[RMDB]
RNA sequence: GGGAACGACUCGAGUAGAGUCGAAAAAAAGGGGUCGAGGCUGUCACUGAGAUCCUCAGCUUCAGCAAGGGGAUGCAUGGUGCCUUAAUUUACUGUAAGAACAUGGAAGAGGCACAGGUUUAGGGGGAUUUGACGAAAUAUUCGUAUUUCGUCAAAUAAAAGAAACAACAACAACAAC
Reactivity to 2A3 in 0.01 (KOAc 150mM, MgCl2 10mM, bicine 150mM(pH8.5), 24C), signal-to-noise 5, nucleotides 027 to 126: a000a000a020g020g000g000g020u060c050g020a030g030g030c010u020g030u080c010a010c080u030g010a020g030a210u100c020c030u010c010a000g010c010u100u060c010a020g000c010a050a060g020g000g000g020a040u070g050c030a050u070g080g010u010g000c010c000u070u050a130a160u090u070u130a120c030u020g030u050a150a080g070a240a030c020a060u140g050g020a050a030g010a030g030g010c010a000c000a030g100g000u070u100u120a040g010g010g000g000g020
Reactivity to DMS in 0.01 (KOAc 150mM, MgCl2 10mM, bicine 150mM(pH8.5), 24C), signal-to-noise 7, nucleotides 027 to 126: a060a070a130g010g000g000g010u000c090g010a120g010g010c050u000g010u000c070a050c050u010g000a090g010a090u010c090c030u000c020a040g010c030u000u010c060a050g020c040a090a110g000g010g000g010a110u010g010c100a080u000g000g020u010g010c010c010u000u000a050a090u000u010u000a120c090u000g000u000a110a110g010a070a100c060a040u010g000g010a110a120g000a030g000g010c010a030c030a060g000g000u000u000u010a120g000g010g000g000g010
The record gives the reactivity of an RNA of 177 nucleotides to 2A3 and DMS. The data come from the RNA Mapping Database (RMDB), library OK2TST. The 2A3 profile rests on 7,800 reads. The reactions ran in a buffer of 150 mM KOAc, 10 mM MgCl2 and 150 mM bicine (pH 8.5), at 24 C. DMS adducts were read by reverse transcription with MarathonRT.